[RMDB]
RNA sequence: GGGAACGACUCGAGUAGAGUCGAAAACCCCGUGUGGAACACACGACUAAGCUUCGGCUUAGUAAGAGCAACUUAGCAUGGUAGGCUCCCCGGCGUGUCUCGAACCAUGCCGGGCCAAACCCAUAGGGCUGGCGGUCCCUGUGCGGUCAUUAUGUAAGUAGUGAGCAUGAUUCGUCAUGCUCACUACAAAAGAAACAACAACAACAAC
Reactivity to 2A3 in 0.01 (KOAc 150mM, MgCl2 10mM, bicine 150mM(pH8.5), 24C), signal-to-noise 3, nucleotides 027 to 156: c010c000c000c010g020u030g000u030g090g180a130a080c040a000c000a000c170g000a000c000u010a020a000g020c000u020u140c260g090g000c000u000u020a000g000u030a070a030g010a000g020c000a020a040c060u070u010a040g050c030a070u000g050g040u050a090g020g080c010u000c010c000c020c000g000g000c000g040u040g060u080c140u070c280g060a050a030c080c000a000u000g000c000c000g010g030g000c000c000a030a020a000c020c010c000a000u020a000g000g010g000c030u070g070g040c080g020g040u150c000c000c000u000g000u000g040c180g000g030u040c020a100u030u250a040u100g100u050a050a180
This 207-nucleotide RNA was probed chemically with 2A3. The RNA was probed in 150 mM KOAc, 10 mM MgCl2 and 150 mM bicine (pH 8.5) at 24 C. 2A3 adducts were read by reverse transcription with SuperScript II with manganese. The 2A3 profile rests on 1,533 reads. Source: RMDB library OK3TST, as collected in RNAgym.